[RMDB]
Structure probing data (DMS and 2A3) for a 177-nucleotide construct. For 2A3 the reverse transcriptase was SuperScript II with manganese. It was measured as part of the RMDB library M2PK50. The RNA was probed in 150 mM KOAc, 10 mM MgCl2 and 150 mM bicine (pH 8.5) at 24 C. The 2A3 profile rests on 5,281 reads. Values are in units of 0.01, from 0 to 300, in steps of 10. For DMS, 2,581 sequencing reads were counted.
RNA sequence: GGGAACGACUCGAGUAGAGUCGAAAAGGCUCCCACUUCGGUGGGAGCCAAAGCUGAACGCGCAGCAAGCGUUAAACAUGGAAAAACGCACGUCCAAUGCCCAAAGCUUCCCCUUCGGGGGAAGCAACACUGAUAUACCGUUCGCGGUAUAUCAGUGAAAAGAAACAACAACAACAAC
Reactivity to DMS in 0.01 (KOAc 150mM, MgCl2 10mM, bicine 150mM(pH8.5), 24C), signal-to-noise 3, nucleotides 027 to 126: g030g040c000u000c000c000c000a010c000u000u010c150g040g000u000g000g010g010a000g010c000c000a000a000a040g010c070u000g000a020a060c080g010c060g010c060a100g000c100a080a080g000c030g000u000u000a040a070a100c110a140u010g000g030a100a050a050a100a060c100g000c000a050c080g000u010c030c020a050a070u000g000c010c010c030a070a100a110g000c000u000u000c000c000c000c000u000u010c120g000g000g020g000g000a000a000g010c000a040a070
Reactivity to 2A3 in 0.01 (KOAc 150mM, MgCl2 10mM, bicine 150mM(pH8.5), 24C), signal-to-noise 3, nucleotides 027 to 126: g000g010c000u000c010c010c010a000c010u050u060c250g090g000u000g000g010g020a000g000c000c000a000a000a000g010c000u010g040a070a020c040g040c020g010c060a040g020c050a120a050g010c010g010u040u060a070a220a020c070a130u210g080g020a050a130a000a000a020c020g000c010a010c020g030u000c050c020a050a090u080g000c010c010c010a050a130a020g000c000u000u000c010c010c000c000u000u080c160g060g000g000g010g010a000a000g000c000a000a000